This 177-nucleotide RNA was probed chemically with 2A3 and DMS. The reactions ran in a buffer of 150 mM KOAc, 10 mM MgCl2 and 150 mM bicine (pH 8.5), at 24 C. The data come from the RNA Mapping Database (RMDB), libraries RFM100 and RFMREP.

[RMDB]
RNA sequence: GGGAACGACUCGAGUAGAGUCGAAAAGAAAGAAAGAUGGCUGCUGCUGGUGCUAGACCCUAAAUUGGAAACAAUAAUAGUGAUUCUGUGACAAUUUAAUGGGUCUAGUAGUUGCAGUCUGGCCCAAUAUAUAUAAAUGAUUCGUCAUUUAUAUAUAAAAAGAAACAACAACAACAAC
Reactivity to 2A3 in 0.01 (KOAc 150mM, MgCl2 10mM, bicine 150mM(pH8.5), 24C), signal-to-noise 5, nucleotides 027 to 126: g080a010a080a010g090a040a110a010g080a040u180g010g000c000u000g000c000u010g010c000u020g040g090u040g020c000u000a000g000a000c000c000c000u020a020a010a000u010u030g020g030a150a130a010c020a030a020u200a170a060u080a110g200u120g130a120u120u110c050u070g020u020g020a020c000a010a000u000u000u050a130a130u150g000g000g000u000c000u010a000g000u010a000g010u000u020g000c000a000g010u000c020u000g030g000c000c000c000a040a000
Reactivity to DMS in 0.01 (KOAc 150mM, MgCl2 10mM, bicine 150mM(pH8.5), 24C), signal-to-noise 7, nucleotides 027 to 126: g010a110a090a120g000a130a080a100g010a100u020g010g010c000u000g000c000u000g000c030u010g020g040u020g000c000u000a000g010a010c000c000c010u010a010a010a010u000u000g000g000a190a100a020c020a020a060u020a070a090u030a140g020u030g010a300u010u010c160u000g010u000g000a250c000a000a000u000u000u000a040a060u040g010g000g010u000c000u000a000g010u000a010g010u000u010g000c010a010g010u010c050u010g010g000c000c000c030a040a140